[RMDB]
RNA sequence: GGGAACGACUCGAGUAGAGUCGAAAACGUGCGAACCGGUUCGUUCGUAUUCGGAUCGGUGACGGACACCGUCUGCAGGCCCGACACGAUUUGCGGCUUCGUCCACGUCGCGCCGUCGUCGGUCGAAGGGAUUUAAUUACUUCGGUAAUUAAAUCCCAAAAGAAACAACAACAACAAC
Reactivity to DMS in 0.01 (KOAc 150mM, MgCl2 10mM, bicine 150mM(pH8.5), 24C), signal-to-noise 6, nucleotides 027 to 126: c110g020u010g010c020g010a300a030c000c020g000g030u000u000c040g010u000u000c300g020u010a140u000u000c030g030g000a000u000c010g030g010u000g010a060c040g010g000a150c070a150c050c040g010u010c070u010g010c100a140g000g000c080c020c010g010a040c040a050c100g000a080u000u010u020g010c020g010g000c010u000u000c110g000u000c050c080a100c150g000u000c010g020c150g010c070c010g000u000c160g010u000c010g010g000u000c040g010a150a150
Reactivity to 2A3 in 0.01 (KOAc 150mM, MgCl2 10mM, bicine 150mM(pH8.5), 24C), signal-to-noise 5, nucleotides 027 to 126: c030g030u060g020c010g020a020a020c010c000g030g020u040u040c030g010u050u040c070g060u110a210u090u160c020g020g010a010u000c000g010g010u020g120a040c000g020g000a020c030a050c040c020g040u040c060u120g070c060a070g000g090c030c040c020g010a010c030a020c030g100a150u050u040u300g000c030g000g000c000u090u070c060g140u030c060c020a060c070g010u010c010g000c030g000c010c010g010u050c030g000u000c000g000g030u010c010g030a090a100